The data come from the RNA Mapping Database (RMDB), library M2PK50. Chemical mapping of a 177-nucleotide RNA with 2A3 and DMS. DMS adducts were read by reverse transcription with MarathonRT. For 2A3 the reverse transcriptase was SuperScript II with manganese.

[RMDB]
RNA sequence: GGGAACGACUCGAGUAGAGUCGAAAAGAGCUUUUUUUCGAAAAAGCUCCGGCGCAAUGCCUAUGUCUACACUUCACAAGGGUUUGUGGUGGUCAAUGGCAAUACCAGCAAUCUUCGGAUUGCUGAAUGUGAAAAUUGAGUUCGCUCAAUUUUCACAAAAAGAAACAACAACAACAAC
Reactivity to 2A3 in 0.01 (KOAc 150mM, MgCl2 10mM, bicine 150mM(pH8.5), 24C), signal-to-noise 1, nucleotides 027 to 126: g030a000g000c030u110u000u040u000u000u040u140c110g030a010a000a000a000a010g010c000u020c030c030g060g090c010g050c130a090a070u140g000c000c000u070a080u060g010u000c040u090a090c060a030c170u040u140c000a010c030a080a080g160g160g190u100u140u000g010u080g000g000u060g010g040u040c020a040a040u060g000g000c000a000a070u060a150c010c030a000g000c000a000a030u000c010u030u010c160g180g000a010u010u010g000c000u000g000a010a050
Reactivity to DMS in 0.01 (KOAc 150mM, MgCl2 10mM, bicine 150mM(pH8.5), 24C), signal-to-noise 1, nucleotides 027 to 126: g000a000g010c000u000u000u010u020u000u000u010c100g000a030a000a030a000a000g010c000u000c000c090g010g000c120g040c180a110a090u010g020c000c020u000a130u020g000u000c010u010a130c070a060c050u000u000c030a020c020a040a030g000g040g040u010u000u000g030u000g000g030u000g000g000u000c040a030a170u000g010g010c020a040a090u010a070c150c010a000g000c000a010a010u000c000u000u010c150g010g010a010u000u000g000c000u000g000a020a060